Structure probing data (DMS and 2A3) for a 207-nucleotide construct. DMS adducts were read by reverse transcription with MarathonRT. The RNA was probed in 150 mM KOAc, 10 mM MgCl2 and 150 mM bicine (pH 8.5) at 24 C. Values cover nucleotides 27 to 156. For 2A3, 1,336 sequencing reads were counted. In probing experiments dimethyl sulfate is read out at A N1 and C N3, which are open when not base-paired.
[RMDB]
RNA sequence: GGGAACGACUCGAGUAGAGUCGAAAACGAACUGGCUCAACAAAUCGCGUCCGUCAAUUCGCGGACGCCUGGCAAAAUUCAAGAAAGAGGGGAAAAUCGCAUGAACAACUUACGCGGACACAAAUACGUUAUAUGGGGCGUAAUCGCAGCAAGCGCCCCCAUACGUACCCUUCGGGGUACGUAUGGGAAAAGAAACAACAACAACAAC
Reactivity to DMS in 0.01 (KOAc 150mM, MgCl2 10mM, bicine 150mM(pH8.5), 24C), signal-to-noise 1, nucleotides 027 to 156: c030g010a170a070c060u000g070g030c040u000c060a080a080c050a070a090a120u010c030g030c000g050u010c020c010g000u000c030a110a220u020u000c180g000c010g020g010a060c000g040c010c000u000g020g010c010a000a020a090a170u010u000c040a060a040g000a150a060a120g010a010g050g020g000g040a030a040a060a030u020c070g000c050a090u010g000a050a050c040a060a100c060u010u000a030c080g050c020g000g020a070c050a060c040a020a060a060u000a040c100g000u000u000a080u000a130u000g000g000g060g070c010g010u000a030a160u000c090g020c040a090g000c010a090a120g010c000g010c010c000
Reactivity to 2A3 in 0.01 (KOAc 150mM, MgCl2 10mM, bicine 150mM(pH8.5), 24C), signal-to-noise 2, nucleotides 027 to 156: c040g020a050a010c040u080g050g000c020u050c090a020a060c030a080a160a110u130c060g000c000g000u010c000c000g060u050c040a080a260u240u040c050g000c000g000g000a000c000g020c010c020u020g000g000c040a000a080a060a190u090u090c040a070a000g080a050a070a010g040a090g000g010g010g000a070a020a010a050u090c050g000c060a030u110g060a070a040c020a030a030c040u070u120a020c050g000c000g070g010a010c010a000c010a070a120a050u260a110c070g010u050u110a070u070a060u280g010g040g010g000c000g000u020a000a040u070c070g030c040a010g010c010a100a090g020c030g030c050c000